An RNA of 177 nucleotides, treated with 2A3 and DMS and read out base by base.
For 2A3, 1,229 sequencing reads were counted.
As a SHAPE reagent, 2A3 marks flexible, mostly unpaired nucleotides at the ribose 2'-OH.
RNA sequence: GGGAACGACUCGAGUAGAGUCGAAAACUGCGAUGGAUACCCGUGCCAUCGGCAUGGCGGUGGUCGGCAUGGGCGGUGGCCGCCGCGUGGCGACCGAUCGUAUCGAUUACGCUGUCGGCUUUGAUCAUCAGUCCAGUGGUUUCGACCACUGGACUGAAAAAGAAACAACAACAACAAC
Reactivity to 2A3 in 0.01 (KOAc 150mM, MgCl2 10mM, bicine 150mM(pH8.5), 24C), signal-to-noise 1, nucleotides 027 to 126: c010u060g030c010g060a040u020g000g000a020u090a120c000c040c040g040u100g030c010c000a090u040c000g000g000c140a080u140g100g000c110g000g050u040g030g050u010c030g010g140c020a040u070g070g000g020c010g050g040u120g120g110c050c030g000c000c000g070c040g010u030g000g000c000g020a000c030c000g000a040u000c010g010u080a110u130c010g030a050u020u070a000c020g020c030u030g050u080c000g000g000c010u180u180u230g100a140u130c100a030
Reactivity to DMS in 0.01 (KOAc 150mM, MgCl2 10mM, bicine 150mM(pH8.5), 24C), signal-to-noise 1, nucleotides 027 to 126: c100u000g000c020g030a040u020g030g000a150u000a080c070c030c030g020u010g010c010c010a040u000c060g010g000c100a050u000g020g010c040g000g010u000g020g010u000c010g010g000c020a010u000g000g010g000c050g010g010u010g010g030c050c030g030c020c040g010c050g020u000g010g000c040g000a020c010c010g000a060u000c050g020u000a200u010c090g010a080u000u000a100c090g010c030u000g000u000c070g000g030c070u000u000u010g000a140u000c170a150